RNA sequence: GGGAACGACUCGAGUAGAGUCGAAAAUCAGAAUGAUUGGUCUAACAUUUUUCAUAAUCAUCCUGUACUUCUUAGCCGGUUUGCAUAGAAGCGCCGGUGCUUUUUUUACUAUGUAUUUGUACAAAAAGGAUAUGAGCUGAUUCGUCAGCUCAUAUCCAAAAGAAACAACAACAACAAC
Reactivity to 2A3 in 0.01 (KOAc 150mM, MgCl2 10mM, bicine 150mM(pH8.5), 24C), signal-to-noise 2, nucleotides 027 to 126: u060c010a000g040a000a000u000g000a000u000u060g130g050u010c110u150a260a190c070a290u130u130u000u040u050c070a060u100a140a020u020c020a000u030c000c000u000g000u000a020c050u030u010c020u060u110a050g000c000c010g010g010u020u190u170g010c000a060u040a160g140a200a090g100c000g000c020c000g000g010u000g130c050u100u000u000u000u000u000u120a040c040u000a020u150g030u090a150u170u140u170g070u010a040c100a000a040a000a040a000